RNA sequence: GGGAACGACUCGAGUAGAGUCGAAAAACAAACAGCACGGGCAGCGUCAUGAUAAUGCCCGUGCGGAAGUAAUAACCCCAUGUGAUGGUCAUAUUUUUCUGGGACAGCACGUGCAACCACAACAAGGAGCUGUCUACACAUUCGUGUGUAGACAGCUAAAAGAAACAACAACAACAAC
Reactivity to 2A3 in 0.01 (KOAc 150mM, MgCl2 10mM, bicine 150mM(pH8.5), 24C), signal-to-noise 1, nucleotides 027 to 126: a050c000a020a160a040c040a000g000c010a010c010g010g000g060c000a050g020c010g100u120c080a140u220g170a140u050a180a010u070g000c000c000c000g000u000g000c000g000g010a000a000g000u070a030a090u030a010a050c000c000c010c030a050u100g020u030g070a060u070g040g060u080c030a010u070a220u070u210u060u070u060c070u050g000g050g060a030c010a000g000c010a000c040g010u050g000c000a000a000c010c010a010c020a200a000c010a110a080g080g010
Reactivity to DMS in 0.01 (KOAc 150mM, MgCl2 10mM, bicine 150mM(pH8.5), 24C), signal-to-noise 2, nucleotides 027 to 126: a040c060a070a040a160c190a170g000c000a020c010g010g000g010c000a000g020c160g000u000c180a150u020g030a070u010a090a160u010g000c000c000c000g050u000g020c020g020g000a080a130g000u010a060a120u020a100a080c040c020c000c120a040u000g040u000g020a030u000g000g020u020c010a090u000a110u010u000u000u000u000c070u000g020g010g010a020c040a030g010c030a050c040g020u000g020c060a090a050c110c050a030c070a020a020c110a060a110g010g010

Background:
Source: RMDB library OK2TRN, as collected in RNAgym. Structure probing data (2A3 and DMS) for a 177-nucleotide construct. In probing experiments dimethyl sulfate is read out at A N1 and C N3, which are open when not base-paired. For DMS, 1,002 sequencing reads were counted. The reactions ran in a buffer of 150 mM KOAc, 10 mM MgCl2 and 150 mM bicine (pH 8.5), at 24 C. 2A3 adducts were read by reverse transcription with SuperScript II with manganese.